[RMDB]
RNA sequence: GGGAACGACUCGAGUAGAGUCGAAAAGCUCUUGUGACUAUUAGUCUCGAAAUAUGGCAUAAAACAAGGGGGAACGGAUCUUGCGACAUUGGUGGUUCCUCUAUGAUCCUCCAAUUACUAUAUAGCCUAGCCUAUGCUGAUUCGUCAGCAUAGGCUAAAAAGAAACAACAACAACAAC
Reactivity to 2A3 in 0.01 (KOAc 150mM, MgCl2 10mM, bicine 150mM(pH8.5), 24C), signal-to-noise 3, nucleotides 027 to 126: g030c000u000c000u030u030g030u020g000a040c050u010a080u240u150a120g000u030c010u010c100g070a040a190a000u260a060u070g000g030c030a050u020a090a090a000a000c040a050a030g000g040g000g010g050a000a080c000g060g000a060u040c000u130u120g130c100g020a010c030a120u030u040g010g000u040g000g030u050u040c010c010u000c050u080a070u170g020a000u000c000c000u000c020c000a000a000u060u110a190c250u020a010u050a040u080a160g000c000c020
Reactivity to DMS in 0.01 (KOAc 150mM, MgCl2 10mM, bicine 150mM(pH8.5), 24C), signal-to-noise 2, nucleotides 027 to 126: g020c030u010c060u000u000g010u000g000a070c070u000a060u030u030a060g000u010c020u010c030g010a080a070a070u020a090u000g000g020c020a150u010a050a060a100a070c110a040a110g030g000g000g000g000a070a070c170g000g080a040u000c070u000u000g010c130g000a040c050a100u000u010g030g010u000g000g000u010u010c060c110u020c070u020a050u020g020a040u010c040c010u000c040c010a030a040u000u030a100c060u020a090u010a100u010a040g030c080c010
Chemical mapping of a 177-nucleotide RNA with 2A3 and DMS. Reactivities are given for positions 27 through 126. For DMS the reverse transcriptase was MarathonRT. Source: RMDB libraries RFM100 and RFMREP, as collected in RNAgym.